Source: RMDB library OK2TST, as collected in RNAgym. Structure probing data (2A3 and DMS) for a 177-nucleotide construct.
RNA sequence: GGGAACGACUCGAGUAGAGUCGAAAAGCUCUGAAGGCUGAAAGGAUGAAUUUUAUAAUCCCUAAGAUGCUGGGAAUUGUCUUUGAACAGCUUUAUUAGCCACCCCAUCUUGGCCAAUCAAUCAAGCAUGAGGAAAUUCAUUCGUGAAUUUCCUCAUAAAAGAAACAACAACAACAAC
Reactivity to 2A3 in 0.01 (KOAc 150mM, MgCl2 10mM, bicine 150mM(pH8.5), 24C), signal-to-noise 1, nucleotides 027 to 126: g000c020u020c010u080g060a090a040g000g000c010u000g000a010a040a030g010g000a010u060g050a040a060u050u140u110u060a130u060a130a140u030c010c000c000u000a050a070g140a210u210g070c120u030g070g000g000a040a070u070u070g040u050c010u000u060u090g020a050a010c000a030g030c000u080u050u010a090u070u040a020g000c000c000a040c010c000c000c000a000u040c010u000u000g000g000c040c020a060a090u120c030a020a030u110c010a000a060g170c010
Reactivity to DMS in 0.01 (KOAc 150mM, MgCl2 10mM, bicine 150mM(pH8.5), 24C), signal-to-noise 4, nucleotides 027 to 126: g010c000u000c110u000g010a120a100g000g010c010u000g020a080a070a060g000g000a010u000g020a050a110u020u020u020u020a130u010a170a180u000c020c010c010u000a050a100g020a070u010g020c250u000g020g000g010a030a090u000u000g000u000c020u000u000u000g000a110a090c020a060g000c010u000u000u000a070u010u000a030g010c010c060a180c160c000c010c050a080u010c040u000u010g010g000c020c060a060a140u000c180a080a060u010c080a050a090g010c300
Values cover nucleotides 27 to 126. The 2A3 profile rests on 1,416 reads. Conditions: 150 mM KOAc, 10 mM MgCl2 and 150 mM bicine (pH 8.5), 24 C. For DMS, 2,450 sequencing reads were counted.